Record summary: Structure probing data (2A3 and DMS) for a 177-nucleotide construct. For DMS the reverse transcriptase was MarathonRT. For 2A3, 13,272 sequencing reads were counted.

[RMDB]
RNA sequence: GGGAACGACUCGAGUAGAGUCGAAAAGCGUUGCAGAAUCAGUACGCGAAAUGCAGCUGAAUUACUCGACCAUCACUGGUGUGACCCGUGACGAUCUUGAAGAUGAAGGCGCUUGGCUAUAUGCAGAACGAGAAAUUGUAUUCGUACAAUUUCUCGUAAAAGAAACAACAACAACAAC
Reactivity to 2A3 in 0.01 (KOAc 150mM, MgCl2 10mM, bicine 150mM(pH8.5), 24C), signal-to-noise 8, nucleotides 027 to 126: g020c010g030u040u050g050c090a020g070a080a070u050c010a020g030u060a110c150g030c010g070a140a200a080u280g000c010a020g000c010u020g030a070a030u060u050a120c020u010c030g020a020c000c030a020u040c010a000c040u070g000g050u110g110u150g180a090c000c000c010g010u020g020a020c020g020a040u020c010u050u100g060a090a050g040a080u090g040a050a040g060g010c000g000c000u030u040g030g000c010u080a080u010a020u300g050c040a030g040a090
Reactivity to DMS in 0.01 (KOAc 150mM, MgCl2 10mM, bicine 150mM(pH8.5), 24C), signal-to-noise 9, nucleotides 027 to 126: g010c090g030u000u010g030c090a060g010a150a090u000c030a030g010u000a080c180g010c020g000a090a080a090u010g020c020a250g010c010u000g000a080a090u010u000a100c040u000c050g000a050c030c020a090u000c040a040c040u000g020g000u000g010u010g010a060c040c020c030g010u000g000a040c090g000a020u000c020u000u010g010a090a090g010a080u000g010a110a160g000g010c030g010c030u000u000g010g000c040u000a070u010a060u010g010c070a100g000a110